Annotation: Structure probing data (2A3 and DMS) for a 177-nucleotide construct. For 2A3, 16,633 sequencing reads were counted. It was measured as part of the RMDB library TTRDEL.

RNA sequence: GGGAACGACUCGAGUAGAGUCGAAAAGAUAUGGAACACAUCGAUCUAUCGGAGCGAUGAAAUCGGAAACGAUGGAGCUCCGUAUAGGGAGUGUUCCUAAGUCAAAAGUGCAGGUUCGCCUGCACAAUCAGUAAACAAUCUUCGGAUUGUUUACUGAAAAAGAAACAACAACAACAAC
Reactivity to 2A3 in 0.01 (KOAc 150mM, MgCl2 10mM, bicine 150mM(pH8.5), 24C), signal-to-noise 6, nucleotides 027 to 126: g020a010u080a030u190g010g000a010a010c000a000c010a300u300c080g120a120u060c030u010a010u020c010g020g010a010g010c020g220a300u040g040a050a030a010u010c010g000g020a080a050a030c010g000a020u020g000g020a010g000c000u000c000c000g000u040a000u000a000g020g020g000a020g000u000g000u010u000c000c010u000a110a000g050u010c010a000a040a080a110g000u000g000c000a000g010g040u050u130c180g100c070c000u000g000c000a000c000a000a010
Reactivity to DMS in 0.01 (KOAc 150mM, MgCl2 10mM, bicine 150mM(pH8.5), 24C), signal-to-noise 7, nucleotides 027 to 126: g010a040u010a300u010g000g000a000a010c000a010c010a250u000c110g010a070u010c000u000a010u000c010g010g010a010g020c000g000a090u020g000a050a140a020u000c000g000g000a160a090a200c000g010a010u000g000g000a100g010c000u000c000c000g010u010a000u000a010g010g000g010a030g000u000g000u000u000c000c000u010a010a060g010u010c030a050a090a080a140g010u000g010c000a010g010g010u000u020c230g010c000c000u000g010c000a010c000a040a050